[RMDB]
RNA sequence: GGGAACGACUCGAGUAGAGUCGAAAAUCGUGCUAGUUCGGUACUAUACAGGGAAGGGAAGUCACUCGCAUACGUGUGUGUGCAUUUCUUGCUAUUGCUGCUUAGCUUCUCUAAAACACUGGGCUACGUUAUCCCUUUUAUUCGUAAAAGGGAUAACAAAAGAAACAACAACAACAAC
Reactivity to 2A3 in 0.01 (KOAc 150mM, MgCl2 10mM, bicine 150mM(pH8.5), 24C), signal-to-noise 9, nucleotides 027 to 126: u120c030g020u080g070c080u020a010g010u010u020c010g010g000u010a030c030u030a030u070a140c290a070g000g000g010a010a000g010g010g000a010a000g010u010c000a000c010u050c010g000c010a010u030a110c300g050u010g000u010g000u000g000u000g020c040a010u020u000u000c010u010u010g010c010u040a070u190u300g100c110u030g000c000u040u020a000g010c000u010u000c000u000c010u010a050a060a030a010c040a010c010u010g000g010g000c000u020a030c020
Reactivity to DMS in 0.01 (KOAc 150mM, MgCl2 10mM, bicine 150mM(pH8.5), 24C), signal-to-noise 9, nucleotides 027 to 126: u010c070g020u010g020c200u000a020g010u000u000c020g010g010u000a040c080u000a120u010a090c160a040g000g000g010a030a030g010g000g000a020a010g000u000c030a020c020u000c020g010c010a030u010a080c190g040u000g030u000g010u000g010u000g010c140a020u000u000u000c010u000u000g010c010u000a050u010u020g020c300u010g000c010u000u000a030g000c010u000u000c010u000c010u000a060a090a120a150c250a030c020u000g010g000g000c020u010a030c170
An RNA of 177 nucleotides, treated with 2A3 and DMS and read out base by base. Values cover nucleotides 27 to 126.